[RMDB]
RNA sequence: GGGAACGACUCGAGUAGAGUCGAAAAAGGAGAUGCGUCCGCAAUAUUACAAUGUGCUGUGUCCCGUGCGCCAUGACAAUCGCAAUCUGCAUGCCAUCCUCAAUGAAUCCAAGCUAACGGCGGAAGACAUAAAUUUAAUCUUCGGAUUAAAUUUAUGAAAAGAAACAACAACAACAAC
Reactivity to 2A3 in 0.01 (KOAc 150mM, MgCl2 10mM, bicine 150mM(pH8.5), 24C), signal-to-noise 4, nucleotides 027 to 126: a000g080g000a050g000a060u080g020c020g030u030c020c010g040c030a040a050u080a060u280u120a060c080a080a100u110g020u060g080c030u030g010u020g050u080c020c000c000g000u030g020c030g000c010c000a060u070g030a050c030a010a070u060c030g000c030a010a100u050c030u060g030c010a020u050g030c020c000a060u030c010c010u040c020a030a040u120g030a040a020u010c030c030a080a000g010c020u060a110a030c040g060g010c010g030g030a020a010g020a010
Reactivity to DMS in 0.01 (KOAc 150mM, MgCl2 10mM, bicine 150mM(pH8.5), 24C), signal-to-noise 6, nucleotides 027 to 126: a090g000g000a100g010a060u000g000c070g020u000c040c040g020c070a090a080u010a080u000u010a100c160a080a080u000g020u010g020c020u010g010u000g010u000c010c020c030g030u010g010c080g010c040c040a060u000g010a060c100a060a070u000c070g010c060a080a070u010c060u000g020c040a070u000g010c030c030a050u000c020c020u000c090a050a070u000g010a080a090u000c030c030a060a100g010c050u010a060a090c130g000g020c040g000g010a070a070g000a120